[RMDB]
RNA sequence: GGGAACGACUCGAGUAGAGUCGAAAAUGUCCAUAUGUCCAUUUUACAGAUAAGUAAGCUGAGGAAAUGGAGGCACCCAGUAUGGAAUUUCUGAUGAUGGAAGUGGGAUGGACUUGCUAAAGGGGGACACGAUUAAGGAUUUCGAUCCUUAAUCGUGAAAAGAAACAACAACAACAAC
Reactivity to 2A3 in 0.01 (KOAc 150mM, MgCl2 10mM, bicine 150mM(pH8.5), 24C), signal-to-noise 4, nucleotides 027 to 126: u090g020u020c000c010a020u060a040u090g060u010c000c010a010u000u020u020u100a110c010a020g060a050u150a290a050g130u050a160a050g050c010u010g010a080g070g090a070a020a060u070g030g020a030g050g030c030a020c020c010c000a030g020u040a070u100g040g060a090a050u060u030u000c030u020g110a120u040g010a030u060g030g030a040a060g050u110g030g070g010a000u020g000g000a030c020u030u050g010c040u160a120a070a060g020g000g010g020g010a010
Reactivity to DMS in 0.01 (KOAc 150mM, MgCl2 10mM, bicine 150mM(pH8.5), 24C), signal-to-noise 4, nucleotides 027 to 126: u000g010u000c000c000a030u000a080u010g010u000c010c000a030u000u000u000u000a140c010a030g000a070u010a100a150g020u020a090a140g020c010u000g010a150g000g000a020a040a040u000g010g000a040g010g030c130a110c020c040c030a100g010u010a050u010g010g010a090a100u000u010u000c020u000g020a110u010g010a080u000g010g010a040a050g010u000g010g010g010a060u000g000g000a050c050u010u010g010c060u010a040a110a160g000g010g000g010g030a300